[RMDB]
RNA sequence: GGGAACGACUCGAGUAGAGUCGAAAACCUCUUCUCUCCCCCUCCGGGUUCUCCUCGCAUCGGACUGGCUCAUUCUCGGAGAGGGCGGACGGUCCUGAGAACUCUUAUCUUCCUGCUUAGAAGAGGAGAACCUUAAAAACUUCGGUUUUUAAGGUUCAAAAGAAACAACAACAACAAC
Reactivity to DMS in 0.01 (KOAc 150mM, MgCl2 10mM, bicine 150mM(pH8.5), 24C), signal-to-noise 1, nucleotides 027 to 126: c000c000u000c040u000u010c010u000c180u000c020c000c000c000c010u010c010c030g010g000g000u000u000c010u000c020c070u000c140g010c140a090u020c190g020g020a080c020u000g000g000c100u000c020a090u000u010c020u000c080g020g010a100g000a080g010g000g010c090g000g000a060c020g000g000u000c000c000u000g000a010g000a050a020c010u000c010u020u020a140u010c130u000u000c010c020u010g030c080u000u010a070g000a050a030g000a030g000g010a160

This 177-nucleotide RNA was probed chemically with DMS. Source: RMDB library 15KREP, as collected in RNAgym.